[RMDB]
RNA sequence: GGGAACGACUCGAGUAGAGUCGAAAAGCCAAUAGUGGGUGAGCCUUGUGUAGCUUAGUCUGCUGUUACAUGGUUUAAGUUUGAGUGGGUUUGGUUAUAGUCUAUGUGGCGAUUCUUGAUUGGUUCAGGACGAAGAUUCGUUCGCGGAUCUUCGUCCAAAAGAAACAACAACAACAAC
Reactivity to 2A3 in 0.01 (KOAc 150mM, MgCl2 10mM, bicine 150mM(pH8.5), 24C), signal-to-noise 2, nucleotides 027 to 126: g040c000c000a040a040u190a100g110u130g000g080g000u040g060a020g040c000c010u110u120g100u040g000u060a020g000c010u050u000a010g000u210c000u000g000c020u000g040u040u080a020c010a040u050g020g080u020u110u180a140a040g000u000u010u150g050a030g000u050g000g020g000u000u060u020g000g010u010u010a070u090a110g010u050c050u000a060u120g060u000g050g000c040g030a050u070u030c000u000u030g060a140u010u020g000g000u040u010c000a010
Reactivity to DMS in 0.01 (KOAc 150mM, MgCl2 10mM, bicine 150mM(pH8.5), 24C), signal-to-noise 3, nucleotides 027 to 126: g000c040c020a090a030u010a100g030u030g000g000g030u000g020a050g000c030c030u010u010g010u010g030u000a060g020c040u000u000a080g010u020c040u000g010c040u000g000u030u030a030c080a070u020g010g000u000u010u020a080a110g000u010u010u000g010a030g030u000g020g000g020u000u020u020g000g010u000u000a050u010a060g000u000c030u000a070u010g000u000g000g000c050g000a060u040u020c060u000u000g000a120u020u000g000g010u000u000c070a170
Structure probing data (2A3 and DMS) for a 177-nucleotide construct. The reactions ran in a buffer of 150 mM KOAc, 10 mM MgCl2 and 150 mM bicine (pH 8.5), at 24 C.